Annotation:
Conditions: 150 mM KOAc, 10 mM MgCl2 and 150 mM bicine (pH 8.5), 24 C. An RNA of 177 nucleotides, treated with DMS and 2A3 and read out base by base. For 2A3, 1,941 sequencing reads were counted.
[RMDB]
RNA sequence: GGGAACGACUCGAGUAGAGUCGAAAACGGUCUUGCUUCAGCUUAUAGGGCGAAUUCCUUUGAUGUACCUACAUUCUGCGCAAACCGUUCUGCAAUGUGUAAUUGGUGCUUGAUUAGCCAAGAUUCCGAAGGACGAGAAGUUCGCUUCUCGUCCUUCAAAAGAAACAACAACAACAAC
Reactivity to DMS in 0.01 (KOAc 150mM, MgCl2 10mM, bicine 150mM(pH8.5), 24C), signal-to-noise 4, nucleotides 027 to 126: c000g000g000u000c130u000u020g010c000u000u010c030a010g000c060u010u000a070u000a020g000g010g020c060g010a110a120u020u010c150c190u000u010u020g010a160u010g010u000a090c010c010u000a010c070a010u000u000c030u010g050c300g000c040a030a020a040c000c010g010u000u000c020u010g030c060a100a010u000g040u000g010u000a100a050u000u000g010g030u010g000c190u000u000g010a130u010u010a180g010c070c030a050a040g000a110u010u010c090c080
Reactivity to 2A3 in 0.01 (KOAc 150mM, MgCl2 10mM, bicine 150mM(pH8.5), 24C), signal-to-noise 3, nucleotides 027 to 126: c010g000g030u020c040u080u040g020c030u140u120c010a000g000c010u060u020a020u020a050g000g030g020c080g100a090a070u130u120c060c000u100u060u240g120a090u120g010u150a240c000c000u010a000c010a050u030u020c000u000g000c010g000c010a010a000a010c000c000g000u030u020c010u040g000c020a050a130u120g060u030g040u180a070a060u040u030g040g020u060g020c000u110u120g090a170u090u120a020g010c000c000a010a010g070a060u070u000c060c010